[RMDB]
RNA sequence: GGGAACGACUCGAGUAGAGUCGAAAAGCAGAAUCGCGAUUCUAAAACGUAUCGAUACACAUUUUCAAAAUACAUGUCGUUCGAUAAAUACGAUGGUAUAAUAACUAAAUGUCACGAAGAAACAAUACAUUGCGCGGCUGUUCGCGGUCGCGUAAUGAAAAGAAACAACAACAACAAC
Reactivity to DMS in 0.01 (KOAc 150mM, MgCl2 10mM, bicine 150mM(pH8.5), 24C), signal-to-noise 9, nucleotides 027 to 126: g020c120a090g010a130a090u000c070g020c040g010a080u000u000c060u000a080a070a120a130c170g000u000a040u000c010g010a050u010a090c140a050c020a030u000u010u000u010c140a100a110a110a060u010a040c100a060u000g010u000c060g010u000u000c070g000a090u010a050a080a090u010a040c040g010a060u000g000g010u000a020u000a050a070u010a080a100c090u000a030a050a040u000g010u000c060a070c070g010a050a070g010a110a070a050c090a040a070u010a110
Reactivity to 2A3 in 0.01 (KOAc 150mM, MgCl2 10mM, bicine 150mM(pH8.5), 24C), signal-to-noise 9, nucleotides 027 to 126: g070c050a020g090a120a090u090c050g000c030g070a030u040u040c060u140a070a080a070a070c060g040u040a020u100c010g020a020u090a110c050a000c010a040u020u040u090u150c080a100a100a060a030u100a050c090a110u040g010u020c030g010u020u030c040g050a090u090a130a130a010u140a040c030g050a070u040g010g010u040a040u020a140a140u100a070a020c070u060a060a060a080u080g020u040c020a010c100g030a070a070g040a080a100a010c030a020a030u080a110